RNA sequence: GGGAACGACUCGAGUAGAGUCGAAAACGACUUUUUGAUUAAGGAUAGGUUCAGACUUCGCGUGUCCUUUAUGUUUGUGUCUGAAUCGUAAUAAAACGGUGCCAAAACAAAGGGUGGUCCGAAGCUGCGAUAAGAAAAGUUUCGACUUUUUUUAUCGAAAAGAAACAACAACAACAAC
Reactivity to DMS in 0.01 (KOAc 150mM, MgCl2 10mM, bicine 150mM(pH8.5), 24C), signal-to-noise 6, nucleotides 027 to 126: c050g010a090c040u010u010u010u010u010g010a140u020u000a040a130g010g000a110u000a050g000g000u000u000c000a010g000a040c010u010u010c080g000c080g010u010g000u010c040c050u010u020u020a030u020g000u010u010u010g020u010g010u010c030u000g010a050a020u000c010g000u010a060a080u020a060a070a090a070c070g000g020u010g010c030c040a030a080a060a070c080a040a050a050g000g010g010u000g000g010u010c060c010g010a030a050g010c060u010g010
Reactivity to 2A3 in 0.01 (KOAc 150mM, MgCl2 10mM, bicine 150mM(pH8.5), 24C), signal-to-noise 4, nucleotides 027 to 126: c020g070a050c030u010u040u000u050u100g090a100u030u060a050a030g050g010a030u020a040g010g000u000u030c000a000g000a030c010u030u050c100g000c010g030u030g030u090c030c000u050u100u020a080u080g060u010u100u060g070u000g010u000c010u010g020a000a010u010c010g000u030a030a120u050a140a140a020a000c010g040g010u050g020c000c010a000a070a040a010c020a070a100a050g020g000g010u040g010g000u000c010c010g000a030a010g000c030u040g010
Source information
Chemical mapping of a 177-nucleotide RNA with DMS and 2A3. For 2A3, 6,048 sequencing reads were counted. Values cover nucleotides 27 to 126. The data come from the RNA Mapping Database (RMDB), library OK1LIB.